Structure probing data (DMS and 2A3) for a 177-nucleotide construct.
For 2A3 the reverse transcriptase was SuperScript II with manganese.
[RMDB]
RNA sequence: GGGAACGACUCGAGUAGAGUCGAAAAGAUAUGGAUUCCUAUGGGUAGUCUCGACUCGGAAACGAGUCGGGAGGACUAUAAUCCAUCAGGAAUCCUAAGUCAAAAGGCAAUACUUCGGUAUUGCCAAGUCUUACUAAAACUUCGGUUUUAGUAAGACAAAAGAAACAACAACAACAAC
Reactivity to DMS in 0.01 (KOAc 150mM, MgCl2 10mM, bicine 150mM(pH8.5), 24C), signal-to-noise 5, nucleotides 027 to 126: g000a010u000a180u010g000g000a020u000u000c000c010u010a050u000g000g010g020u010a080g010u010c000u000c000g000a010c000u000c000g000g000a040a030a090c010g000a010g020u000c000g010g000g010a060g010g020a120c190u000a140u010a230a100u000c010c000a000u000c260a010g000g010a010a010u000c000c000u000a010a060g000u010c010a100a070a150a130g010g010c010a000a010u000a010c000u010u010c260g050g010u000a010u000u000g010c000c000a010a030
Reactivity to 2A3 in 0.01 (KOAc 150mM, MgCl2 10mM, bicine 150mM(pH8.5), 24C), signal-to-noise 5, nucleotides 027 to 126: g000a000u020a020u090g000g000a000u000u000c010c010u010a010u000g020g030g080u260a300g100u080c020u020c050g000a000c000u000c000g000g000a020a030a020c000g000a000g000u000c000g000g000g000a000g000g010a000c000u000a010u160a220a160u040c000c000a000u070c200a000g000g000a010a000u000c000c000u000a020a000g000u000c030a000a030a110a160g020g010c000a000a010u000a010c020u060u160c300g150g010u010a010u010u000g000c010c000a010a000

DMS adducts were read by reverse transcription with MarathonRT. The reactions ran in a buffer of 150 mM KOAc, 10 mM MgCl2 and 150 mM bicine (pH 8.5), at 24 C. The data come from the RNA Mapping Database (RMDB), library TTRDES. The DMS profile rests on 8,461 reads.